[RMDB]
RNA sequence: GGGAACGACUCGAGUAGAGUCGAAAAGACUGGCUGUCAAGCCAGCACGGAGCCGUGAGCACCUCAUCCUUAGUACAUAUCGCGAUAUGUAGCGCUCCUUUUUUGGCUAGUUAUGGAUGAAAUUAGAGGGAUCCGAUUUGUUCGCAGGUCGGAUCCCAAAAGAAACAACAACAACAAC
Reactivity to 2A3 in 0.01 (KOAc 150mM, MgCl2 10mM, bicine 150mM(pH8.5), 24C), signal-to-noise 9, nucleotides 027 to 126: g070a070c010u010g000g010c010u040g100u300c100a080a030g000c000c000a000g000c000a010c030g050g040a020g060c050c020g070u100g030a020g010c040a040c020c020u020c000a040u000c010c010u040u090a020g040u030a030c020a020u060a010u060c050g020c060g160a020u020a030u100g040u030a020g040c000g030c030u070c010c030u010u040u020u020u090u090g050g000c040u040a050g010u160u060a070u130g030g010a020u020g050a030a040a080u170u130a100g050a120
Reactivity to DMS in 0.01 (KOAc 150mM, MgCl2 10mM, bicine 150mM(pH8.5), 24C), signal-to-noise 9, nucleotides 027 to 126: g010a210c000u000g010g000c000u000g000u060c290a100a060g010c000c010a010g020c060a090c100g010g010a060g010c020c010g000u010g010a120g010c030a100c070c090u000c030a050u010c010c020u000u020a070g010u010a020c020a020u000a010u000c100g020c210g010a070u000a010u000g000u000a030g010c060g000c090u020c030c020u000u010u020u020u020u030g000g010c230u000a050g010u010u010a060u010g010g000a050u000g000a040a080a090u030u020a060g010a300